[RMDB]
RNA sequence: GGGAACGACUCGAGUAGAGUCGAAAAACUUCGAAGCGGGGUCGAUUCGGCAUAGUAUGAUACCAAACACACUCACAUCCGGCACGCUGUUGCUCGUGGUUGCAGCGUUUGCAAGCAGCCUUGCAACGGACGCUAUAAUGUUCGCAUUAUAGCGUCCAAAAGAAACAACAACAACAAC
Reactivity to DMS in 0.01 (KOAc 150mM, MgCl2 10mM, bicine 150mM(pH8.5), 24C), signal-to-noise 4, nucleotides 027 to 126: a080c040u010u000c060g010a120a100g000c070g010g010g000g010u000c050g010a110u040u000c030g000g030c120a040u000a040g000u000a110u020g010a080u000a070c080c060a040a130a110c040a050c060a040c060u000c040a090c090a050u010c040c020g000g010c010a040c050g010c020u010g020u000u000g000c050u020c110g020u020g020g030u010u010g000c040a160g020c080g000u010u050u030g020c020a070a090g020c070a040g020c090c020u000u000g010c040a070a050c120
Reactivity to 2A3 in 0.01 (KOAc 150mM, MgCl2 10mM, bicine 150mM(pH8.5), 24C), signal-to-noise 8, nucleotides 027 to 126: a000c050u120u100c040g050a080a020g030c020g010g030g010g020u040c020g040a100u050u060c030g030g010c060a050u040a070g090u080a100u150g070a070u090a150c040c000a050a060a020c040a000c010a020c060u030c010a050c010a100u040c020c000g040g000c020a010c020g040c010u020g030u030u050g010c010u040c100g140u140g040g000u030u030g000c020a020g000c020g070u110u180u230g030c030a080a030g010c000a000g010c000c000u040u070g000c020a020a010c000